[RMDB]
RNA sequence: GGGAACGACUCGAGUAGAGUCGAAAAGAAGAAAAAGAAACACGCGAACCUGGCAAAGGCCGCAGAGCCAGGAGCGUGAUAAUCGCAGAAAGAUCUGCGGCCAAAAGGCAGAAGAACUGCCAAGAAACACCAUAUGGGUAUUCGUACCCAUAUGGUGAAAAGAAACAACAACAACAAC
Reactivity to 2A3 in 0.01 (KOAc 150mM, MgCl2 10mM, bicine 150mM(pH8.5), 24C), signal-to-noise 4, nucleotides 027 to 126: g050a050a020g130a020a110a030a010a010g170a060a150a000c000a000c000g010c000g010a060a150c000c000u000g000g000c010a030a250a300g030g000c000c010g010c010a000g000a000g000c010c000a000g000g000a000g000c010g000u000g000a000u050a010a050u130c050g010c090a020g160a130a080a000g110a040u000c000u000g000c000g000g010c000c000a020a040a020a000g000g000c010a000g010a200a010g040a110a100c000u000g010c000c000a000a000g000a020a060a000
Reactivity to DMS in 0.01 (KOAc 150mM, MgCl2 10mM, bicine 150mM(pH8.5), 24C), signal-to-noise 3, nucleotides 027 to 126: g000a150a090g010a060a070a130a100a110g000a130a120a120c000a010c020g000c000g000a130a070c000c000u020g000g010c000a130a140a110g000g000c020c010g000c000a000g010a020g020c000c000a000g010g000a080g000c000g000u000g010a010u020a030a040u040c130g000c160a130g000a070a060a030g000a030u000c000u000g010c000g020g000c000c030a080a020a120a070g000g010c010a000g000a210a200g030a090a110c000u000g020c000c000a030a070g000a100a120a090